[RMDB]
RNA sequence: GGGAACGACUCGAGUAGAGUCGAAAAACUUGUGACCAGCUUGCACAGGACAUGGCCGAGGAGGCAGCCCAGAACAUUUCUGAUGACCAGGAAAGGUGAGUUAUCACUGUUCUCAGAGGGUUUGGUAAGCUUGAUUUUAAAGUAUGCAUUCAGAAAAACGCAUAAAUACUUUCGAGUAUUUAUGCGUAAAAGAAACAACAACAACAAC
Reactivity to DMS in 0.01 (KOAc 150mM, MgCl2 10mM, bicine 150mM(pH8.5), 24C), signal-to-noise 2, nucleotides 027 to 156: a070c040u010u000g000u000g010a090c020c030a080g000c020u010u000g020c060a120c060a150g010g020a120c050a120u000g030g020c020c020g000a140g000g020a230g010g050c010a240g030c020c020c050a150g000a110a130c060a100u000u000u000c010u000g000a010u020g020a080c020c020a170g000g040a030a100a090g030g040u000g000a050g030u000u000a080u000c020a020c020u000g000u010u000c010u000c020a200g010a070g020g000g010u000u000u000g030g020u000a050a080g010c040u000u000g010a130u000u010u000u010a030a030a130g010u010a080u000g020c050a110u000u000c050a080g020a020a060a080a110
Reactivity to 2A3 in 0.01 (KOAc 150mM, MgCl2 10mM, bicine 150mM(pH8.5), 24C), signal-to-noise 3, nucleotides 027 to 156: a000c090u090u120g050u050g060a040c030c000a020g030c060u040u070g020c050a050c020a120g020g060a090c030a110u070g080g000c040c000g010a030g060g050a030g000g000c000a020g010c010c000c000a020g030a050a010c040a090u090u100u070c030u040g070a090u100g030a040c000c030a020g080g170a150a090a070g080g020u050g030a130g000u040u050a030u070c010a030c070u010g000u030u030c040u000c020a020g090a060g050g050g000u080u060u070g020g000u010a020a000g000c020u040u040g090a160u060u060u120u180a060a090a020g030u050a050u140g060c070a070u060u220c040a040g090a050a070a070a000